[RMDB]
RNA sequence: GGGAACGACUCGAGUAGAGUCGAAAACUGGCAGAACAUGAAAUCCUUCCUAAACUGAUUGUCCACUUUUUUCUUUGACAUUCUCUUGAGAACAGCCACUAGUUUCUCAGUGUGCUUAGCAAAUAUGAAUUUACAAUAUAAAUCAAUAUGGACAUUACCCAUCCGUAUACUUCGGUAUACGGAUGGGAAAAGAAACAACAACAACAAC
Reactivity to 2A3 in 0.01 (KOAc 150mM, MgCl2 10mM, bicine 150mM(pH8.5), 24C), signal-to-noise 2, nucleotides 027 to 156: c010u000g040g000c040a010g070a130a100c070a160u090g070a070a050a000u060c010c000u040u050c030c070u140a140a110a090c040u050g090a120u110u000g030u000c030c000a070c070u050u130u040u000u010u000c040u070u130u060g020a010c010a020u120u060c090u000c020u140u050g010a010g010a040a020c010a010g090c060c010a060c020u070a020g080u040u130u050c060u030c030a000g000u030g000u000g050c000u040u020a010g020c020a000a070a000u110a100u140g020a010a020u070u120u090a080c080a130a020u120a040u120a300a100a000u020c010a010a070u060a070u220g000g020a000c000a000u050u050a040